[RMDB]
This 177-nucleotide RNA was probed chemically with 2A3 and DMS. The reactions ran in a buffer of 150 mM KOAc, 10 mM MgCl2 and 150 mM bicine (pH 8.5), at 24 C. The 2A3 profile rests on 2,936 reads.
RNA sequence: GGGAACGACUCGAGUAGAGUCGAAAAGAUAUGGAAGGUUCUCACCAGGACGAAGAACUCGGAAACGAGGGAGUCCGUGAGAGACCUUCCUAAGUCAAACCAGAAUGCACUUCGGUGCAUUCUGGAAGAUCUUCUCAUGGUUCGCCAUGAGAAGAUCAAAAGAAACAACAACAACAAC
Reactivity to 2A3 in 0.01 (KOAc 150mM, MgCl2 10mM, bicine 150mM(pH8.5), 24C), signal-to-noise 2, nucleotides 027 to 126: g000a010u080a050u180g020g020a010a000g000g050u000u050c010u000c000a030c080c160a080g010g000a020c010g210a300a160g000a050a020c010u000c000g030g000a060a050a030c020g000a000g000g000g000a020g000u000c000c000g020u010g000a000g020a020g000a000c000c000u000u020c000c000u000a030a000g030u000c050a080a050a070c010c000a010g020a020a000u000g000c010a010c030u080u130c300g100g000u000g010c000a000u000u010c000u000g010g010a000a000
Reactivity to DMS in 0.01 (KOAc 150mM, MgCl2 10mM, bicine 150mM(pH8.5), 24C), signal-to-noise 2, nucleotides 027 to 126: g000a030u010a300u010g010g010a000a020g000g010u010u000c000u010c000a000c040c260a230g050g000a010c010g000a080a130g020a050a250c010u000c000g020g020a100a080a230c000g000a020g010g000g000a050g030u000c010c010g040u000g020a020g020a050g000a040c010c010u000u000c000c000u000a000a040g020u000c020a070a100a180c010c000a020g000a020a000u000g030c020a000c000u000u010c150g010g020u000g020c000a010u010u000c000u000g030g030a020a090